[RMDB]
RNA sequence: GGGAACGACUCGAGUAGAGUCGAAAAGGCAUCAACAAGUCGCGCACGUACCGGAUGCUGUGCACGCUCGAGCUGCACCGCUUCGUCGUGCAGGACGCGCGCACGUCGACCUACGCGCUCGGGCCGAUGCUAAUAAAAUCUUCGGAUUUUAUUAGCAAAAAGAAACAACAACAACAAC
Reactivity to 2A3 in 0.01 (KOAc 150mM, MgCl2 10mM, bicine 150mM(pH8.5), 24C), signal-to-noise 8, nucleotides 027 to 126: g040g000c010a040u030c040a070a170c040a150a050g060u060c030g000c020g010c210a040c060g050u110a070c020c050g060g010a020u090g000c040u050g020u020g010c010a010c060g010c010u060c070g110a090g080c030u030g000c040a030c040c030g010c050u110u110c050g130u040c010g000u010g000c010a010g030g040a020c040g010c000g000c010g010c040a010c020g040u010c000g000a040c000c010u040a030c040g030c000g000c030u000c010g000g020g000c020c020g020a050
Reactivity to DMS in 0.01 (KOAc 150mM, MgCl2 10mM, bicine 150mM(pH8.5), 24C), signal-to-noise 9, nucleotides 027 to 126: g000g000c020a060u010c070a090a090c140a110a150g010u000c050g010c160g010c060a060c060g010u010a080c180c090g000g000a060u000g010c020u000g010u000g000c020a040c100g010c020u010c120g000a110g020c020u000g010c020a040c060c130g000c110u000u010c100g010u010c040g000u000g000c010a050g000g000a080c090g010c080g000c070g010c020a040c040g000u000c010g010a050c090c020u000a060c090g000c050g010c300u000c010g000g000g010c020c040g000a130